[RMDB]
Conditions: 150 mM KOAc, 10 mM MgCl2 and 150 mM bicine (pH 8.5), 24 C. This 177-nucleotide RNA was probed chemically with 2A3. Values cover nucleotides 27 to 126. Source: RMDB library OK1LIB, as collected in RNAgym. The 2A3 profile rests on 694 reads.
RNA sequence: GGGAACGACUCGAGUAGAGUCGAAAAUCAAUCUUCCAUCAGUGAGCUUCUGGCAAGAAUGGACAACGUGUGCAACCUCACCUCCGUUCACACCAUCCGGGAGACCGGACCCCGACAAUUCGCCCAGAGUUCGUCGCGAAUUCGUUCGCGACGAACUAAAAGAAACAACAACAACAAC
Reactivity to 2A3 in 0.01 (KOAc 150mM, MgCl2 10mM, bicine 150mM(pH8.5), 24C), signal-to-noise 1, nucleotides 027 to 126: u100c000a020a160u000c010u030u000c030c000a100u060c030a120g050u000g030a000g030c000u010u020c030u070g050g000c030a100a180g050a100a110u080g040g040a040c000a130a000c140g020u080g040u020g110c030a080a020c000c010u040c000a060c020c020u000c000c000g040u050u040c050a070c000a040c110c000a060u040c020c000g020g000g000a100g060a040c000c000g020g000a000c000c000c000c000g030a050c030a140a030u130u090c060g050c040c000c000a030g060